This 207-nucleotide RNA was probed chemically with 2A3. It was measured as part of the RMDB library OK3TST. The reactions ran in a buffer of 150 mM KOAc, 10 mM MgCl2 and 150 mM bicine (pH 8.5), at 24 C. For 2A3 the reverse transcriptase was SuperScript II with manganese.
RNA sequence: GGGAACGACUCGAGUAGAGUCGAAAAUCAAACAAUCCACCACCGAAAUCAUAACCAACACUAUAGAUCUGAUUUACGCGGAAUGGAAGCGUUUUGGAAUCAUUUCGGAUGCACUUAACUCGUUUCAUGAAAUACCCUCUUUGUUUUAUAUGUGGUCCGGUACACAUCUGUUCGCAGAUGUGUACCGAAAAGAAACAACAACAACAAC
Reactivity to 2A3 in 0.01 (KOAc 150mM, MgCl2 10mM, bicine 150mM(pH8.5), 24C), signal-to-noise 2, nucleotides 027 to 156: u110c030a030a060a110c010a010a150u030c010c020a020c040c010a010c000c050g020a020a000a010u030c020a030u040a110a130c100c030a040a030c070a050c100u170a110u150a300g040a040u070c040u020g050a070u030u060u170a130c100g000c040g070g110a050a070u110g070g040a050a030g040c020g030u030u060u050u050g060g020a030a010u070c020a020u030u010u010c040g030g000a050u020g060c030a010c080u080u150a130a050c020u040c120g080u010u040u050c070a070u080g100a060a090a070u150a070c000c040c000u010c110u100u040u070g030u020u130u100u050a200u060a170u150g040u040g010g040u020c060